[RMDB]
RNA sequence: GGGAACGACUCGAGUAGAGUCGAAAACAGGAUAGCGGAUUGUGUACAGCGUUAUCCGACCGACGAGAGCACGGUGAGGAAGGAGCUCGCCAUUCUUCCAGUUCUCGGAGGCGAGAGGAGUACACAAGGGUACCAUGGAGUUCGCUCCAUGGUACCCAAAAGAAACAACAACAACAAC
Reactivity to 2A3 in 0.01 (KOAc 150mM, MgCl2 10mM, bicine 150mM(pH8.5), 24C), signal-to-noise 2, nucleotides 027 to 126: c090a010g000g020a000u010a010g010c010g070g030a160u140u160g030u000g010u050a010c010a040g100c040g030u000u010a020u010c000c000g030a010c010c010g010a020c000g000a000g000a000g010c130a020c220g190g130u240g040a030g000g070a020a060g030g040a090g050c000u000c090g070c010c000a100u070u010c020u070u000c050c010a000g030u000u000c000u000c000g000g010a010g000g000c090g000a110g000a040g060g040a050g000u000a000c020a000c020a030a070
This 177-nucleotide RNA was probed chemically with 2A3. Source: RMDB library OK1LIB, as collected in RNAgym. The RNA was probed in 150 mM KOAc, 10 mM MgCl2 and 150 mM bicine (pH 8.5) at 24 C. Reactivities are given for positions 27 through 126.